This 207-nucleotide RNA was probed chemically with 2A3. 2A3 adducts were read by reverse transcription with SuperScript II with manganese. Values cover nucleotides 27 to 156.
RNA sequence: GGGAACGACUCGAGUAGAGUCGAAAAUAUGGCGUUCGCGCCAUAAAAAAUCCUAAGUCAUUCUGUGAUGGCUUGAACUACAACGAUGAGUGUCGGAAACGACACGAGUUGCAAGCUGCAUGGAUGAUAUGGAAAAAAAACUACCUUCGGGUAGUAAGUAAGCUCUGUGUUUCGACACAGAGCUUACAAAAGAAACAACAACAACAAC
Reactivity to 2A3 in 0.01 (KOAc 150mM, MgCl2 10mM, bicine 150mM(pH8.5), 24C), signal-to-noise 2, nucleotides 027 to 156: u060a020u010g000g020c050g000u100u030c180g050c020g040c090c040a000u020a000a030a000a000a000a020u000c050c000u070a120a040g020u000c010a020u300u000c060u110g080u040g120a300u130g120g000c040u000u000g000a040a010c020u300a100c210a150a010c050g120a110u300g110a070g030u020g010u000c000g030g030a150a090a040c040g000a010c000a000c010g010a000g030u000u020g100c000a000a000g000c010u000g020c010a020u020g000g020a010u000g010a000u010a060u060g030g150a040a000a030a000a000a010a010a010c010u040a010c000c030u010u090c140g130g020g000u040a010g020u060a030a000